An RNA of 177 nucleotides, treated with 2A3 and DMS and read out base by base. DMS adducts were read by reverse transcription with MarathonRT.
RNA sequence: GGGAACGACUCGAGUAGAGUCGAAAAAGCAGGUGCCUUACGAGGCACCUGCAGCCCCUGACUGCUGCAUCCUGCUGCCUUGGGGAAUAUCAACCACCAAGCAGCAGUGUGCAGUGGUGAGGGUGAAACCCUUAUCCAAGUUCGCUUGGAUAAGGGUAAAAGAAACAACAACAACAAC
Reactivity to 2A3 in 0.01 (KOAc 150mM, MgCl2 10mM, bicine 150mM(pH8.5), 24C), signal-to-noise 9, nucleotides 027 to 126: a000g000c000a000g000g000u010g010c010c010u090u040a080c270g100a040g010g000c000a000c000c000u000g000c000a000g000c000c010c000c000u020g160a000c000u000g000c000u000g000c000a000u020c000c000u000g000c000u010g030c020c090u010u010g020g000g010g090a030a020u210a090u200c090a060a110c010c060a190c070c000a010a000g000c000a000g000c000a000g000u000g000u000g000c000a000g000u010g000g000u010g040a000g010g010g000u060g030a130a050
Reactivity to DMS in 0.01 (KOAc 150mM, MgCl2 10mM, bicine 150mM(pH8.5), 24C), signal-to-noise 5, nucleotides 027 to 126: a080g020c000a010g010g020u000g010c000c000u000u000a140c180g020a030g030g020c000a010c000c000u010g020c000a030g000c090c010c000c000u010g000a010c000u000g000c000u000g000c000a010u000c300c000u000g000c000u000g000c130c050u010u000g010g000g000g000a160a080u030a100u040c300a100a110c040c000a100c000c010a030a020g000c000a020g000c010a010g010u000g010u010g010c000a010g010u010g000g010u000g000a010g000g000g000u000g000a080a080

The data come from the RNA Mapping Database (RMDB), libraries RFM100 and RFMREP.